[RMDB]
RNA sequence: GGGAACGACUCGAGUAGAGUCGAAAAGUAGCGCGUGUGUGCUGAGUCGACGAAACGGCAUGCUAGCGCCGCGGUGUGAAGCGUAGGUGACGAUACGUUGAGGCUGCGGAGCUCAGCACCUGCAUAGGCCGCUUGCGUGGUUCGCCAUGUAAGCGGCAAAAGAAACAACAACAACAAC
Reactivity to 2A3 in 0.01 (KOAc 150mM, MgCl2 10mM, bicine 150mM(pH8.5), 24C), signal-to-noise 9, nucleotides 027 to 126: g100u100a020g020c020g000c040g040u050g010u020g000u010g010c010u010g010a010g030u050c020g040a170c040g050a110a070a060c030g040g000c020a020u110g040c030u080a050g000c010g000c010c000g000c000g000g010u060g050u090g130a050a010g010c000g000u010a010g010g130u130g110a060c070g030a060u010a020c010g010u020u020g030a030g190g000c000u010g000c000g000g010a010g000c000u000c010a000g000c000a010c000c000u000g000c010a040u050a050g110
Reactivity to DMS in 0.01 (KOAc 150mM, MgCl2 10mM, bicine 150mM(pH8.5), 24C), signal-to-noise 9, nucleotides 027 to 126: g000u020a060g020c090g010c030g010u010g010u050g020u000g010c000u000g000a050g010u010c040g010a130c150g020a090a120a140c080g010g000c030a140u030g010c100u010a100g010c010g010c010c000g010c000g010g020u010g000u060g010a160a030g010c000g000u000a020g000g020u010g010a090c160g000a100u000a010c000g010u000u000g000a290g000g000c000u020g010c000g000g000a100g000c000u000c050a010g000c000a020c050c020u000g000c050a100u020a080g010